[RMDB]
RNA sequence: GGGAACGACUCGAGUAGAGUCGAAAAUGGGUUCACAUCCCCAACCCGCGGGCCGGCUGUUCUUCUUUCUCUUUCCUCGUCUUCCUCGGUCAACCUCCGGAGUUCCUCUUCCUCCUCCUUGCUGAGGCAAGCUAGGCGUUCGCGCCUAGCAAAAGAAACAACAACAACAAC
Reactivity to DMS in 0.01 (KOAc 150mM, MgCl2 10mM, bicine 150mM(pH8.5), 24C), signal-to-noise 5, nucleotides 027 to 129: u030g030g010g040u000u000c000a150c150a160u030c050c010c000c090a090a130c060c040c000g000c090g030g010g060c050c030g030g030c000u040g030u020u010c040u050u030c040u000u020u040c050u020c040u010u030u000c060c050u020c040g060u030c000u040u000c070c060u030c070g050g050u010c060a050a160c080c060u030c030c040g000g070a010g010u000u000c030c000u010c060u010u020c030c030u000c040c020u050c040c050u010u020g020c050u030g020a090g030g020c080a040a030
Reactivity to 2A3 in 0.01 (KOAc 150mM, MgCl2 10mM, bicine 150mM(pH8.5), 24C), signal-to-noise 5, nucleotides 027 to 129: u040g010g020g010u120u120c090a040c030a170u140c010c000c010c000a020a060c010c000c010g030c020g000g020g010c020c000g010g010c060u050g040u080u050c010u020u000c000u000u080u000c050u000c000u030u020u030c000c000u040c000g010u030c030u080u020c000c000u040c050g000g010u030c040a050a060c000c010u010c010c020g030g000a040g010u010u020c000c000u010c000u050u050c000c000u010c000c000u000c020c000u050u070g000c050u030g030a040g050g020c000a030a020